RNA sequence: GGGAACGACUCGAGUAGAGUCGAAAAUUCGACUUGCAAGUGCUGGGUCCACAAGGACAGAUAUUGAAGGGUGGUGACGCCAAAGUUAGCAUGGAAGAGAGAGCCGGCCUCACUGUUCCAAGGGCACCAAUCGCGAAUCAUUCGUGAUUCGCGAUUGAAAAGAAACAACAACAACAAC
Reactivity to DMS in 0.01 (KOAc 150mM, MgCl2 10mM, bicine 150mM(pH8.5), 24C), signal-to-noise 1, nucleotides 027 to 126: u000u000c030g010a090c010u000u000g020c050a070a110g010u000g030c060u000g010g000g010u000c010c000a070c220a100a150g010g000a060c050a030g000a110u010a080u000u000g010a120a100g030g010g020u000g050g020u010g010a080c110g020c060c040a030a070a120g010u000u000a130g000c050a090u000g000g000a030a080g010a180g000a110g000a100g020c040c070g010g010c050c040u010c050a120c050u000g000u010u000c020c030a040a180g000g020g000c030a030c100

Background
An RNA of 177 nucleotides, treated with DMS and read out base by base. The RNA was probed in 150 mM KOAc, 10 mM MgCl2 and 150 mM bicine (pH 8.5) at 24 C. Source: RMDB library OK2TST, as collected in RNAgym.